[RMDB]
RNA sequence: GGGAACGACUCGAGUAGAGUCGAAAAAUGCGCUUGAGCAGCUCGCGGACUACGGCUUUGCCUGGCGGGACAUCGCACGCGUUGUCGGAGUGAGCGUGCCCGCAAUCACCAAAUGGCGCAAGGGCGCGCACGUGGGAACGUUCGCGUUCCCACGUGCAAAAGAAACAACAACAACAAC
Reactivity to 2A3 in 0.01 (KOAc 150mM, MgCl2 10mM, bicine 150mM(pH8.5), 24C), signal-to-noise 2, nucleotides 027 to 126: a010u160g010c030g020c040u060u040g010a010g020c040a040g000c080u040c030g190c050g070g010a030c050u100a030c120g000g030c030u060u070u220g040c030c040u030g040g010c010g000g000g010a070c020a060u090c020g000c000a020c030g020c030g100u090u200g070u170c020g050g060a150g060u050g060a040g020c080g040u080g130c020c000c000g050c000a030a090u160c030a030c080c000a010a110a090u250g010g010c000g000c020a040a070g000g030g040c020g000c000
Reactivity to DMS in 0.01 (KOAc 150mM, MgCl2 10mM, bicine 150mM(pH8.5), 24C), signal-to-noise 1, nucleotides 027 to 126: a130u020g020c030g030c030u040u000g000a300g000c010a150g050c030u000c020g110c080g010g000a090c120u020a100c130g000g000c010u030u000u000g020c000c030u000g010g030c080g000g000g010a050c070a010u000c000g010c000a080c080g000c020g000u000u030g050u030c000g020g000a060g040u000g000a020g000c060g000u000g000c030c000c000g040c030a030a050u000c080a130c010c000a000a300a060u060g010g090c010g000c030a100a110g060g000g000c040g000c070